Structure probing data (DMS and 2A3) for a 177-nucleotide construct.
Source: RMDB libraries RFM100 and RFMREP, as collected in RNAgym.
Reactivities are given for positions 27 through 126.
Conditions: 150 mM KOAc, 10 mM MgCl2 and 150 mM bicine (pH 8.5), 24 C.
RNA sequence: GGGAACGACUCGAGUAGAGUCGAAAAGAAAGCUAGAUGGAGGACCGAACCAGUUCUGAUGUGCAAAUCGUUUGGAUGACUUGGGUAUAGGGGUUAAAGGCUAAUCUAGAGUGGCAAUAGCGGGUUCAAUAUGCACUACAUUCGUGUAGUGCAUAUUAAAAGAAACAACAACAACAAC
Reactivity to DMS in 0.01 (KOAc 150mM, MgCl2 10mM, bicine 150mM(pH8.5), 24C), signal-to-noise 9, nucleotides 027 to 126: g000a090a090a090g010c040u000a050g010a070u010g010g010a080g010g000a120c050c030g020a090a090c070c030a100g010u010u000c040u020g010a080u010g010u010g010c130a060a090a080u020c070g010u010u000u020g010g010a090u010g010a080c080u010u010g000g000g010u000a120u010a080g000g000g000g010u000u010a040a080a090g000g010c030u010a050a080u020c080u010a060g000a070g010u010g010g000c060a050a080u010a060g010c070g000g000g010u010u010c090
Reactivity to 2A3 in 0.01 (KOAc 150mM, MgCl2 10mM, bicine 150mM(pH8.5), 24C), signal-to-noise 7, nucleotides 027 to 126: g070a010a050a000g020c040u050a010g010a120u070g060g030a040g010g030a010c000c020g030a050a040c020c010a020g020u090u050c030u070g070a070u040g060u060g060c040a010a040a110u070c050g070u040u060u100g070g010a070u070g020a030c060u050u070g030g000g000u110a090u120a130g000g010g020g000u030u080a060a050a020g050g000c030u020a010a030u030c030u050a020g030a050g090u060g030g020c030a040a030u030a080g030c040g010g020g000u030u010c000